[RMDB]
RNA sequence: GGGAACGACUCGAGUAGAGUCGAAAAGAUAUGGAGGUACUGUUGGGAGAGCUGGGUCGGAAACGACCCUGCUCUUUGAUCAACACAUGUACCUCCUAAGUCAAACAGGGAUGUUCGCAUCCCUGAACUGUCAGUAUGGCUUCGGCCAUACUGACAGAAAAGAAACAACAACAACAAC
Reactivity to DMS in 0.01 (KOAc 150mM, MgCl2 10mM, bicine 150mM(pH8.5), 24C), signal-to-noise 1, nucleotides 027 to 126: g000a050u010a290u000g000g000a030g010g020u000a010c000u000g020u000u000g000g010g010a010g050a010g030c000u000g010g000g000u000c010g030g000a150a030a160c000g000a010c000c000c000u010g000c000u010c000u000u000u000g000a220u030c120a020a050c030a060c300a090u030g000u000a010c000c010u010c000c030u040a010a020g020u010c020a100a210a300c010a000g000g000g000a000u000g000u010u000c280g100c010a050u000c000c000c000u000g010a030a220
Source: RMDB library TTRDES, as collected in RNAgym. An RNA of 177 nucleotides, treated with DMS and read out base by base. The RNA was probed in 150 mM KOAc, 10 mM MgCl2 and 150 mM bicine (pH 8.5) at 24 C. For DMS the reverse transcriptase was MarathonRT. DMS (dimethyl sulfate) methylates the pairing face of unpaired adenines and cytosines.